[RMDB]
RNA sequence: GGGAACGACUCGAGUAGAGUCGAAAAGGCACAGAGUUACUCUGGAGCAGAGAUAAUCUGCAUCACCAGCACUAAAGUGCUAGAAUAUGAGACCAGCCUCCAAGUACUUCCAUCCGGCUGAAGAAAGAAAAUGGGAAAUGGGUUUUACUGCUUAAAACUAGGAUAAUACGUUCGCGUAUUAUCCUAGAAAAGAAACAACAACAACAAC
Reactivity to DMS in 0.01 (KOAc 150mM, MgCl2 10mM, bicine 150mM(pH8.5), 24C), signal-to-noise 2, nucleotides 027 to 156: g010g020c020a040c020a140g010a150g010u000u000a070c040u010c020u010g070g040a300g010c010a010g000a050g000a200u010a100a100u010c000u000g010c000a130u000c040a130c060c000a090g100c050a060c050u000a090a140a180g050u010g010c000u000a050g010a130a100u000a110u000g010a200g000a070c050c020a070g000c020c000u010c020c040a060a110g010u000a060c050u000u000c000c020a110u010c000c020g050g000c020u010g000a040a150g000a080a040a130g020a040a050a050a100u000g010g000g000a050a100a090u000g010g010g040u000u010u000u000a090c050u000g000c040u000u000a020a080a080a170
Reactivity to 2A3 in 0.01 (KOAc 150mM, MgCl2 10mM, bicine 150mM(pH8.5), 24C), signal-to-noise 3, nucleotides 027 to 156: g040g030c050a010c010a040g130a020g060u110u140a080c050u040c040u070g000g010a020g020c020a010g010a010g000a070u160a270a130u080c010u030g010c010a000u050c020a020c030c010a000g000c020a000c020u110a190a080a060g020u030g020c010u030a000g050a040a100u140a070u150g070a040g030a030c020c050a000g030c000c010u040c040c000a050a010g040u030a060c020u120u030c010c020a080u050c010c040g030g010c050u060g010a040a010g040a060a100a010g090a030a110a010a030u090g060g000g000a000a070a050u050g020g020g000u000u020u080u070a040c050u030g120c030u070u140a000a080a080a110